[RMDB]
This 177-nucleotide RNA was probed chemically with 2A3 and DMS. Values are in units of 0.01, from 0 to 300, in steps of 10. The RNA was probed in 150 mM KOAc, 10 mM MgCl2 and 150 mM bicine (pH 8.5) at 24 C. For DMS, 26,490 sequencing reads were counted. For DMS the reverse transcriptase was MarathonRT.
RNA sequence: GGGAACGACUCGAGUAGAGUCGAAAAGCAUCCUAUCACGAGGUAACUGGGUCUAGAUCAGUUACCUGUGAGCGAAAGUUCACAAUGUGUCAAUGAUCUAGACGUUGACGUAUUAGUGAUAGGAUGGCUACAGCUAUCUAUUCGUAGAUAGCUGUAGAAAAGAAACAACAACAACAAC
Reactivity to 2A3 in 0.01 (KOAc 150mM, MgCl2 10mM, bicine 150mM(pH8.5), 24C), signal-to-noise 6, nucleotides 027 to 126: g030c000a000u000c000c000u000a000u000c000a000c010g040a050g010g050u020a040a010c000u020g020g010g060u020c050u060a030g010a120u030c000a010g030u010u000a000c000c000u000g000u000g000a000g000c000g030a110a020a010g000u000u000c000a000c000a020a050u060g060u020g010u020c020a000a030u020g020a070u020c030u090a030g040a110c020g200u000u020g010a020c020g010u020a020u020u050a030g000u000g000a000u000a000g000g000a000u000g000g000
Reactivity to DMS in 0.01 (KOAc 150mM, MgCl2 10mM, bicine 150mM(pH8.5), 24C), signal-to-noise 8, nucleotides 027 to 126: g010c010a010u000c000c000u000a000u000c010a000c000g010a110g000g000u000a020a040c010u000g000g000g010u010c100u000a060g000a060u000c000a030g010u000u000a010c000c020u000g010u000g000a010g010c000g000a120a100a160g010u000u000c000a010c000a030a040u000g010u010g000u000c060a030a050u000g000a070u010c100u010a060g000a050c020g010u000u000g000a080c110g010u000a020u000u000a170g010u000g000a010u000a010g000g000a000u000g000g000